RNA sequence: GGGAACGACUCGAGUAGAGUCGAAAAGCCAAAGUUGCCAUGAGACCGUAACUUUCGUAGUCAUUGAUAAAGGGGCAGGUCUCGCUCUUUUGUCAUUGCGGUUGCCUAGAGGCAUGGUCGUUUACCGAAAAGAGCUCAUUCUUCGGAAUGAGCUCAACUUUCUGCGAAAGUUCGCUUUCGCAGAAAGAAAAGAAACAACAACAACAAC
Reactivity to DMS in 0.01 (KOAc 150mM, MgCl2 10mM, bicine 150mM(pH8.5), 24C), signal-to-noise 2, nucleotides 027 to 156: g010c020c000a110a110a180g000u000u030g040c030c070a180u000g010a180g020a060c020c050g010u010a060a070c010u000u000u000c090g000u010a100g020u000c060a120u020u000g020a020u060a010a020a000g020g000g010g040c010a160g040g010u000c100u000c130g020c000u000c000u010u000u000u010g000u000c010a040u000u000g050c020g020g000u010u010g020c050c070u000a130g000a210g000g010c030a050u010g020g010u000c020g000u000u000u000a050c030c030g030a150a040a110a170g000a040g020c000u000c000a000u000u000c000u000u000c300g030g000a020a000u040g000a010g010c000u000c000a010a020
Reactivity to 2A3 in 0.01 (KOAc 150mM, MgCl2 10mM, bicine 150mM(pH8.5), 24C), signal-to-noise 1, nucleotides 027 to 156: g020c000c000a030a050a030g080u060u050g000c000c000a050u050g070a010g030a180c010c000g030u030a020a020c000u090u140u110c120g060u050a060g110u110c060a020u030u050g010a000u000a050a000a050g000g010g000g010c010a000g120g180u080c050u030c090g000c000u000c000u020u000u020u050g010u020c000a000u000u060g000c020g020g030u000u050g000c030c030u110a160g020a170g180g030c030a020u050g000g010u010c020g000u000u010u140a220c040c040g010a010a050a020a070g000a000g010c000u000c040a010u010u010c060u000u090c190g040g020a000a000u000g000a000g000c000u000c000a000a000
The record gives the reactivity of an RNA of 207 nucleotides to DMS and 2A3. It was measured as part of the RMDB library M2RFPK. Values cover nucleotides 27 to 156. For DMS, 3,457 sequencing reads were counted.